The data come from the RNA Mapping Database (RMDB), library OK3TST. Structure probing data (2A3 and DMS) for a 207-nucleotide construct. The DMS profile rests on 3,025 reads.
RNA sequence: GGGAACGACUCGAGUAGAGUCGAAAAUUCUUCCUUCCCUGCAUCAGGGGAAGAGGCUGGUGAAGUUGGUGAGCAUCAGCUGGACCAGCUGCCCUGGGUAGAGAGCAUGGGCUGCUGGGUCAGAUGUCUCCUGCUCUGGCCGAAACAGGGUUGGUCAGUAUUUAAAUCGUUUCGACGAUUUAAAUACAAAAGAAACAACAACAACAAC
Reactivity to 2A3 in 0.01 (KOAc 150mM, MgCl2 10mM, bicine 150mM(pH8.5), 24C), signal-to-noise 4, nucleotides 027 to 156: u030u010c010u070u140c010c000u010u010c010c000c010u030g080c080a280u210c100a150g010g030g000g000a010a020g050a040g000g000c010u020g020g050u070g100a140a090g060u160u140g080g030u140g050a050g010c020a020u030c020a010g070c040u040g020g010a020c000c000a000g000c010u020g000c000c000c000u060g060g120g040u250a110g040a010g010a010g200c040a080u130g000g000g000c020u030g000c000u020g030g020g010u030c010a010g010a040u070g060u020c020u000c010c010u000g000c010u000c000u010g030g000c030c040g030a030a040a010c030a050g000g070g000u030u030g020g010u070c060a020
Reactivity to DMS in 0.01 (KOAc 150mM, MgCl2 10mM, bicine 150mM(pH8.5), 24C), signal-to-noise 1, nucleotides 027 to 156: u000u000c000u010u000c050c010u020u000c000c010c000u010g030c130a120u020c150a190g030g010g020g020a020a030g020a060g000g000c050u030g000g010u000g000a100a140g020u000u010g010g000u000g010a170g000c120a110u000c020a060g010c020u010g010g010a070c020c010a060g010c000u010g000c000c000c000u000g020g030g050u010a100g010a230g010a110g000c040a120u000g000g000g000c010u010g000c040u010g000g000g000u000c020a010g010a060u000g010u000c030u000c060c030u000g000c010u000c010u000g010g000c060c100g010a200a100a130c000a050g000g010g020u000u010g010g020u000c090a270
Description:
DMS adducts were read by reverse transcription with MarathonRT.